RNA sequence: GGGAACGACUCGAGUAGAGUCGAAAACGUGCGUACUGGGCCGCCGGCACAAUGUUCUACCCAGCCGUCUCAGAGGGCGCGGUUCGACCACGAUCAGCCAGCCGGUCAGCGGGGUCCUCCUAGCUAGGAGGACGUCGAUAUUCGUAUCGACGUCCUCAAAAGAAACAACAACAACAAC
Reactivity to DMS in 0.01 (KOAc 150mM, MgCl2 10mM, bicine 150mM(pH8.5), 24C), signal-to-noise 3, nucleotides 027 to 126: c080g030u010g010c040g020u010a070c050u000g010g010g000c050c110g020c070c060g040g010c050a070c120a070a060u000g000u020u000c120u000a170c130c030c000a130g020c050c030g010u010c020u000c060a070g000a100g010g020g020c020g010c080g010g000u000u000c090g010a050c030c040a090c080g000a080u000c080a140g000c040c040a090g000c060c040g000g010u000c040a110g000c050g000g010g020g000u000c020c030u000c010c020u000a090g020c120u010a100g020
Reactivity to 2A3 in 0.01 (KOAc 150mM, MgCl2 10mM, bicine 150mM(pH8.5), 24C), signal-to-noise 2, nucleotides 027 to 126: c030g020u050g000c020g070u080a060c020u060g010g000g040c040c030g040c040c030g090g000c060a010c020a090a150u220g040u160u050c040u100a080c010c010c000a020g000c010c010g060u010c050u030c040a040g010a030g090g000g010c020g020c020g050g000u020u050c040g010a040c000c000a060c090g030a100u070c010a000g040c020c000a020g030c030c010g010g050u050c000a000g040c030g010g050g000g000u010c000c000u000c010c000u070a110g070c020u060a050g010
An RNA of 177 nucleotides, treated with DMS and 2A3 and read out base by base. For DMS the reverse transcriptase was MarathonRT. For 2A3 the reverse transcriptase was SuperScript II with manganese. The 2A3 profile rests on 2,967 reads. It was measured as part of the RMDB library OK2TRN. The reactions ran in a buffer of 150 mM KOAc, 10 mM MgCl2 and 150 mM bicine (pH 8.5), at 24 C. For DMS, 3,279 sequencing reads were counted.